[RMDB]
RNA sequence: GGGAACGACUCGAGUAGAGUCGAAAAGGGGGUGUAAUGGUCUCGACAUUGCUUUUCGCACAUGCAGUGCACCUCGGAGGCUCGGCUCCGUCAUCAACGGAACAGUUAAUAUAACUGCAAAGAACGAAAAUUCUUACGCUUUAGCUGCUUAAUAACCCUUCAAUAUUGGGUUCGCCCAAUAUUGAAGAAAAGAAACAACAACAACAAC
Reactivity to DMS in 0.01 (KOAc 150mM, MgCl2 10mM, bicine 150mM(pH8.5), 24C), signal-to-noise 1, nucleotides 027 to 156: g010g020g030g010g010u000g000u010a050a060u010g010g000u010c060u020c000g050a180c040a080u010u000g000c030u000u000u000u000c140g000c110a070c150a090u000g020c050a130g000u010g000c030a180c050c000u010c000g040g010a100g000g010c050u000c090g070g070c020u010c000c030g000u000c060a120u010c300a090a000c000g010g050a100a040c000a060g000u000u000a040a180u000a090u000a060a030c100u010g000c020a070a050a050g020a030a110c060g010a130a010a080a300u010u000c040u000u000a070c070g080c050u000u000u000a010g000c000u000g000c020u000u000a110a120u030a090a170c100c060
Reactivity to 2A3 in 0.01 (KOAc 150mM, MgCl2 10mM, bicine 150mM(pH8.5), 24C), signal-to-noise 4, nucleotides 027 to 156: g050g000g020g000g020u050g010u030a070a070u080g030g030u030c020u020c100g060a060c020a030u050u070g000c040u080u080u130u150c100g020c010a040c020a070u120g070c050a020g010u000g030c020a010c010c010u010c000g000g000a010g000g020c080u090c300g030g000c000u000c000c010g090u080c020a000u010c000a000a000c010g000g020a010a000c000a000g000u020u030a110a010u100a100u050a250a140c090u080g000c040a080a020a020g010a030a010c110g190a120a020a040a050u030u010c030u020u030a040c080g010c010u020u000u020a010g000c010u030g010c070u100u070a090a030u090a130a110c050c010
Source: RMDB library ARCHII, as collected in RNAgym. The record gives the reactivity of an RNA of 207 nucleotides to DMS and 2A3. The RNA was probed in 150 mM KOAc, 10 mM MgCl2 and 150 mM bicine (pH 8.5) at 24 C.